[RMDB]
RNA sequence: GGGAACGACUCGAGUAGAGUCGAAAACAAUACGCCGUAGGUAUCAAAAAUAGGCUGCCAUUGCGGAUGUGACGGCAGCAGCGCAAUAUCUUCCGCGCGUGAGCCAGGAAAGAGCAUGGCAAACCGGGGAGUAAAUGGAGUUCGCUCCAUUUACUCCAAAAGAAACAACAACAACAAC
Reactivity to DMS in 0.01 (KOAc 150mM, MgCl2 10mM, bicine 150mM(pH8.5), 24C), signal-to-noise 3, nucleotides 027 to 126: c060a110a030u040a090c050g000c010c020g020u000a070g010g020u000a030u030c060a090a080a040a020a080u040a100g020g000c100u000g000c000c000a050u030u010g020c040g000g010a150u060g030u000g000a070c050g000g030c000a150g000c040a060g020c050g080c080a140a070u000a060u020c040u080u010c070c000g000c070g010c020g000u020g000a180g000c010c030a100g000g010a070a070a080g000a100g000c140a090u020g000g000c020a060a080a220c020c050g000g050
Reactivity to 2A3 in 0.01 (KOAc 150mM, MgCl2 10mM, bicine 150mM(pH8.5), 24C), signal-to-noise 4, nucleotides 027 to 126: c030a000a070u110a070c030g020c010c010g040u040a020g030g040u040a060u180c100a040a060a060a070a060u160a150g070g020c000u010g000c010c000a060u050u100g010c050g080g210a150u210g080u060g120a020c030g010g000c000a010g000c000a010g030c050g010c010a030a030u030a050u110c040u120u020c070c030g010c000g000c020g050u040g020a040g010c010c020a030g040g070a060a110a020g060a020g040c070a070u010g000g000c000a010a000a030c030c010g010g110